[RMDB]
RNA sequence: GGGAACGACUCGAGUAGAGUCGAAAAGCGCAGACAGUAGCGCCAAGCAGGCACCGUGGACUUGUUUGACGUGUCACACCGUCAACGAGAAAAAGACUACAUCCUGUGAGGUUUGCGGUAGCAUAAACGACGACCGAUACUUCGGUAUCGGUCGUCGAAAAGAAACAACAACAACAAC
Reactivity to 2A3 in 0.01 (KOAc 150mM, MgCl2 10mM, bicine 150mM(pH8.5), 24C), signal-to-noise 1, nucleotides 027 to 126: g080c020g000c110a080g020a160c000a150g110u150a000g150c050g000c000c000a050a000g000c010a000g000g000c100a000c050c100g070u010g010g010a090c030u000u010g070u090u210u140g000a000c030g000u100g150u180c110a000c000a000c130c010g010u010c000a000a000c100g000a000g070a020a180a000a000a000g060a000c060u090a100c000a040u130c000c000u040g000u000g040a180g000g140u070u000u300g000c000g190g210u150a070g000c000a040u190a190a000a060
The record gives the reactivity of an RNA of 177 nucleotides to 2A3.
For 2A3, 427 sequencing reads were counted.